[RMDB]
RNA sequence: GGGAACGACUCGAGUAGAGUCGAAAAGCAAAAGCAUUCGGAACAGAAUCACAAACUGCAAUGAAUGCACUCGUAAACGAGGGUAGUGGUGCUUUACGAGGAUUAACUAAAGAGACUAAAGGCGCAACAGGUUACACCAAAGAAUUAGCAAAAGCUACUAAACGCCAUCUUUCGAGAUGGCGUUUAGAAAAGAAACAACAACAACAAC
Reactivity to DMS in 0.01 (KOAc 150mM, MgCl2 10mM, bicine 150mM(pH8.5), 24C), signal-to-noise 2, nucleotides 027 to 156: g030c040a150a050a230a190g040c010a040u000u010c040g000g020a300a070c000a020g000a060a090u030c300a190c230a160a150a170c020u000g040c030a000a300u020g010a060a040u000g060c010a190c020u000c080g010u000a060a070a010c110g020a030g120g010g000u030a030g000u010g010g020u000g020c040u000u000u000a030c030g020a040g000g020a060u000u000a020a120c110u030a030a100a030g020a160g030a100c030u000a030a150a100g040g010c070g050c040a050a040c080a100g000g020u000u000a040c050a030c030c020a030a050a090g020a040a100u000u000a070g050c030a020a020a020a100g010c060u000a130
Reactivity to 2A3 in 0.01 (KOAc 150mM, MgCl2 10mM, bicine 150mM(pH8.5), 24C), signal-to-noise 2, nucleotides 027 to 156: g030c030a060a040a000a000g010c000a010u020u010c020g000g000a000a060c020a010g100a090a090u220c070a090c060a130a130a060c020u030g030c040a020a040u120g010a020a010u010g000c000a000c010u040c020g050u090a000a080a070c050g010a040g010g070g000u060a040g050u030g030g060u110g000c030u060u020u030a010c010g030a030g040g030a060u040u210a050a000c020u030a040a080a030g070a000g030a010c020u080a130a000a050g040g000c050g010c020a000a100c010a090g030g000u010u080a030c030a020c010c050a000a180a000g040a020a090u120u060a020g000c010a070a100a150a050g040c030u080a020

This 207-nucleotide RNA was probed chemically with DMS and 2A3. DMS adducts were read by reverse transcription with MarathonRT. For 2A3, 1,508 sequencing reads were counted. 2A3 adducts were read by reverse transcription with SuperScript II with manganese. The RNA was probed in 150 mM KOAc, 10 mM MgCl2 and 150 mM bicine (pH 8.5) at 24 C.